[RMDB]
RNA sequence: GGGAACGACUCGAGUAGAGUCGAAAAAAGUGUUACGAACGGUGUUCCGUCUAGUGUUACAACUAGUGAAAUUAUUGAAAAAGAAAUAAGUUUGCGCAAAACUAAUUUCAAGACGCAAGUAAUAACAUGAGAUUUGGUAUUUCGAUACCAAAUCUCAAAAAGAAACAACAACAACAAC
Reactivity to DMS in 0.01 (KOAc 150mM, MgCl2 10mM, bicine 150mM(pH8.5), 24C), signal-to-noise 1, nucleotides 027 to 126: a060a060g030u000g000u020u000a020c000g000a080a070c080g000g000u000g010u000u010c020c050g050u000c000u000a000g000u000g010u000u030a220c140a100a040c010u000a000g000u000g000a100a110a060u020u000a070u000u000g010a050a040a180a140a160g000a070a030a030u000a080a050g000u000u000u000g000c300g020c220a140a010a010a000c010u000a140a040u000u000u000c000a050a010g060a080c060g040c000a010a100g020u000a070a020u010a050a030c040a060
The record gives the reactivity of an RNA of 177 nucleotides to DMS.